[RMDB]
An RNA of 177 nucleotides, treated with 2A3 and read out base by base. The RNA was probed in 150 mM KOAc, 10 mM MgCl2 and 150 mM bicine (pH 8.5) at 24 C. 2A3 adducts were read by reverse transcription with SuperScript II with manganese.

RNA sequence: GGGAACGACUCGAGUAGAGUCGAAAAGGAGAGUAGAUGAUUCGCGUUAAGUGUGUGUGAGUGGGAUGUCCUCACACAACGAAGCGAGAGCGCGGUGAAUCAUUGCAUCAGCUCCAAAGAAAGAAAACCCAUUAGCUCGUUUCGACGAGCUAAUGGGAAAAGAAACAACAACAACAAC
Reactivity to 2A3 in 0.01 (KOAc 150mM, MgCl2 10mM, bicine 150mM(pH8.5), 24C), signal-to-noise 2, nucleotides 027 to 126: g010g010a010g000a000g020u090a030g010a050u000g010a010u000u000c000g000c030g030u010u040a120a010g010u060g000u000g000u010g000u010g130a010g010u160g020g070g010a070u100g140u080c000c010u000c000a000c010a000c000a000a000c020g000a010a000g020c020g030a040g030a010g030c000g000c000g010g050u070g000a010a010u000c010a010u010u060g000c000a030u030c040a040g040c000u000c000c000a000a040a010g110a000a100a000g110a030a110a030a040